[RMDB]
RNA sequence: GGGAACGACUCGAGUAGAGUCGAAAAAGACGUUUCGACGUCUAUAAACCGAUGAUGGCAACAGGGUAGCUACCGAAGUUGAUGUGGAAGCCGUUCCAGUCUGAGGGGACCAAGCUUUCGAGCUUGGAACUAUGAUUUUGUUCGCAAAAUCAUAGUUAAAAGAAACAACAACAACAAC
Reactivity to 2A3 in 0.01 (KOAc 150mM, MgCl2 10mM, bicine 150mM(pH8.5), 24C), signal-to-noise 7, nucleotides 027 to 126: a000g020a020c010g000u040u040u110c170g090a020c000g000u000c000u010a090u100a030a050a010c020c020g020a060u080g010a010u050g050g020c040a060a020c050a110g080g040g050u050a030g020c020u040a050c010c000g050a130a030g090u140u130g050a140u110g030u060g060g030a030a020g020c020c010g010u030u000c020c000a030g090u000c020u040g030a030g000g020g010g000a000c010c010a000a000g010c010u100u120u120c220g060a010g000c000u000u000g000g000
Reactivity to DMS in 0.01 (KOAc 150mM, MgCl2 10mM, bicine 150mM(pH8.5), 24C), signal-to-noise 9, nucleotides 027 to 126: a040g000a030c030g020u000u000u010c130g020a030c000g010u000c000u000a040u000a050a100a170c040c010g000a090u000g010a100u000g010g000c050a040a050c060a080g000g010g010u000a080g010c070u000a060c040c030g010a080a100g010u000u000g000a080u000g000u010g010g010a090a080g010c030c040g010u000u000c010c020a100g000u000c060u000g010a140g000g000g010g010a300c010c000a000a010g010c000u000u010u010c150g010a050g010c000u000u000g000g000